The record gives the reactivity of an RNA of 177 nucleotides to 2A3 and DMS. For 2A3 the reverse transcriptase was SuperScript II with manganese. As a SHAPE reagent, 2A3 marks flexible, mostly unpaired nucleotides at the ribose 2'-OH.

RNA sequence: GGGAACGACUCGAGUAGAGUCGAAAACAGACGAGAAAAUCUUGAUGGCUUCACAAGACAUGCAACAAACAAAAUGGAAUACUGUGAUGACAUGAGGCAGCCAAGCUGGGGAGGAGAUAACCACGGGCGUGCGUACUCAAUUCGUUGAGUACGCACGAAAAGAAACAACAACAACAAC
Reactivity to 2A3 in 0.01 (KOAc 150mM, MgCl2 10mM, bicine 150mM(pH8.5), 24C), signal-to-noise 2, nucleotides 027 to 126: c010a000g050a090c040g100a050g080a120a060a080a150u170c000u000u180g040a130u070g050g000c000u030u020c000a000c070a080a010g040a000c000a000u020g000c000a050a060c020a150a300a000c110a080a060a070a090u020g070g040a200a030u180a060c030u010g000u040g020a050u020g010a010c020a120u000g040a050g010g000c000a000g000c000c010a040a000g070c000u000g000g040g000g000a030g040g000a010g030a020u060a020a050c000c000a030c010g020g010g000
Reactivity to DMS in 0.01 (KOAc 150mM, MgCl2 10mM, bicine 150mM(pH8.5), 24C), signal-to-noise 2, nucleotides 027 to 126: c030a020g010a120c100g020a150g000a080a120a050a150u080c040u000u030g000a090u030g030g000c000u000u020c170a050c100a000a110g040a070c060a030u020g000c200a020a000c170a100a170a060c190a080a050a070a040u020g000g000a120a120u000a110c060u020g020u010g000a040u030g020a020c010a050u000g000a070g000g040c070a020g000c050c060a050a090g000c100u000g030g030g020g000a130g000g000a040g020a010u000a050a090c020c100a050c180g000g000g000
Background
Conditions: 150 mM KOAc, 10 mM MgCl2 and 150 mM bicine (pH 8.5), 24 C.